[RMDB]
Chemical mapping of a 207-nucleotide RNA with 2A3 and DMS. Reactivities are given for positions 27 through 156. 2A3 adducts were read by reverse transcription with SuperScript II with manganese. The data come from the RNA Mapping Database (RMDB), library ARCHII. Conditions: 150 mM KOAc, 10 mM MgCl2 and 150 mM bicine (pH 8.5), 24 C.
RNA sequence: GGGAACGACUCGAGUAGAGUCGAAAAGCUGCCUAAAAACCAGCGGGCGUGACCCGAUUCGGAUUGCUUGUGUCUGAUGACAGGUCUUAUUAUUAGCAAGCUACGGUAGAAUCUUGUCUAGUGAUUUUACAAGAGAUUGAUAGACUCGCUUGAUUUGCACAAAAAUGUUGUUCGCAACAUUUUUGUGAAAAGAAACAACAACAACAAC
Reactivity to 2A3 in 0.01 (KOAc 150mM, MgCl2 10mM, bicine 150mM(pH8.5), 24C), signal-to-noise 3, nucleotides 027 to 156: g020c020u030g030c000c000u070a110a090a070a070a090c040c020a020g030c030g020g040g000c040g120u130g030a050c000c010c020g010a010u040u020c010g000g000a000u020u100g000c000u000u040g010u010g000u030c010u010g020a010u020g010a030c010a060g040g000u010c050u030u050a090u120u020a080u040u130a030g020c010a000a010g000c000u010a000c010g000g000u010a000g000a010a010u010c010u040u300g030u010c010u010a010g010u010g030a010u020u000u050u000a000c000a010a010g000a020g050a080u060u250g110a060u040a030g000a000c000u010c090g090c080u040u020g040a140u130u040u160g020
Reactivity to DMS in 0.01 (KOAc 150mM, MgCl2 10mM, bicine 150mM(pH8.5), 24C), signal-to-noise 2, nucleotides 027 to 156: g030c000u000g020c000c050u000a090a120a080a140a120c170c010a090g030c060g000g000g020c040g010u010g000a110c000c000c020g020a230u010u000c020g010g010a050u010u000g050c050u020u000g030u000g020u010c000u010g010a040u020g000a260c290a030g010g010u000c020u030u010a050u000u000a160u010u010a030g050c040a020a060g000c030u010a140c040g020g030u000a030g010a030a050u010c020u010u000g030u000c060u000a090g030u000g000a080u000u010u000u000a020c020a050a060g000a150g000a080u000u000g010a120u000a060g000a060c020u010c040g030c030u000u000g000a210u010u000u010g010